About this RNA:
The data come from the RNA Mapping Database (RMDB), library OK3TST. Chemical mapping of a 207-nucleotide RNA with 2A3. Values are in units of 0.01, from 0 to 300, in steps of 10. The RNA was probed in 150 mM KOAc, 10 mM MgCl2 and 150 mM bicine (pH 8.5) at 24 C.

[RMDB]
RNA sequence: GGGAACGACUCGAGUAGAGUCGAAAACUCGCGGCCUGCCUUUUUCGCGAGCAAGGCCUGCCCGAGCGCGUUGUUGACCUUGUGUGCGCCGCCGUGGAGCAGGUCCUCUCGCUUGAGAUAAAUGUCGGCACCGUAGCGCUCGCUCAGGUUCCGCGCGCAAGCCCCGAAAGUUCGCUUUCGGGGCUUGAAAAGAAACAACAACAACAAC
Reactivity to 2A3 in 0.01 (KOAc 150mM, MgCl2 10mM, bicine 150mM(pH8.5), 24C), signal-to-noise 1, nucleotides 027 to 156: c040u020c020g020c000g020g010c010c050u010g040c040c020u090u180u020u010u090c010g000c000g000a020g000c060a110a060g000g000c020c010u010g000c000c000c000g090a140g010c000g000c010g010u040u190g120u080u170g110a110c040c070u270u240g090u070g080u120g170c020g010c000c010g000c010c010g120u220g030g020a080g000c000a000g010g010u040c000c000u040c000u000c010g000c000u110u150g070a070g020a070u200a030a110a060u150g050u210c050g020g000c010a040c020c000g000u010a000g060c030g020c020u010c010g000c000u010c030a010g030g010u010u060c000c040g010c000g020c040g050